[RMDB]
RNA sequence: GGGAACGACUCGAGUAGAGUCGAAAAGGGGGAAUGCGGUGGGAUCGUUUCACGAUCGAAGCCAGUCGUUUCCGGUGCAAACGCCCCGCAUAACUACAAUCGGUAUCGACGUUUCUCGUCGGCAUGAUAGCUUUUACGACUUCGGUCGUAAAAGCUAAAAAGAAACAACAACAACAAC
Reactivity to DMS in 0.01 (KOAc 150mM, MgCl2 10mM, bicine 150mM(pH8.5), 24C), signal-to-noise 1, nucleotides 027 to 126: g000g020g050g000g000a170a040u020g010c010g040g020u010g030g050g030a060u030c010g020u000u000u000c070a020c000g010a100u010c180g010a100a170g030c050c050a040g000u010c010g020u000u000u000c010c020g020g060u020g000c200a020a050a020c080g010c010c010c030c030g030c040a020u000a100a120c100u010a020c170a130a080u000c070g000g010u020a100u010c000g020a030c030g000u000u010u010c110u000c030g010u010c010g010g010c020a050u020g010a150